Chemical mapping of a 177-nucleotide RNA with DMS and 2A3. It was measured as part of the RMDB library RFM100. 2A3 adducts were read by reverse transcription with SuperScript II with manganese. Reactivities are given for positions 27 through 126.
RNA sequence: GGGAACGACUCGAGUAGAGUCGAAAAGAAAGAAUUCCCGGAUGUAGCUCAGCGGUUCUUUCGACUAAGGCAUCAGCUUCUAACCACGCGAGGUGGUUCGAGACCCGGGGGCGUUCUCCAGUUUUAACUUUGAGACGACUUUCGAGUCGUCUCAAAGAAAAGAAACAACAACAACAAC
Reactivity to DMS in 0.01 (KOAc 150mM, MgCl2 10mM, bicine 150mM(pH8.5), 24C), signal-to-noise 1, nucleotides 027 to 126: g000a030a130a100g000a130a300u000u000c000c000c040g000g050a070u000g010u020a050g000c120u030c080a020g030c210g000g000u010u000c100u000u000u000c010g000a050c110u050a040a030g020g020c040a090u000c180a100g000c000u010u030c010u000a050a040c030c000a010c010g000c280g010a100g010g000u000g000g000u010u010c120g010a130g000a100c000c020c000g000g000g000g000g000c010g000u000u000c020u000c010c050a090g000u000u020u000u000a130a150
Reactivity to 2A3 in 0.01 (KOAc 150mM, MgCl2 10mM, bicine 150mM(pH8.5), 24C), signal-to-noise 2, nucleotides 027 to 126: g080a000a070a000g030a030a060u140u090c070c000c000g030g020a070u160g080u170a020g030c040u020c100a010g050c010g020g000u090u050c070u060u070u090c000g050a020c080u060a050a050g010g000c040a150u040c040a110g050c000u020u020c000u020a050a040c000c000a010c020g110c120g070a100g300g090u000g000g060u020u040c030g070a030g030a070c000c000c000g000g050g000g000g020c000g000u000u000c050u040c010c010a000g030u010u040u060u000a060a050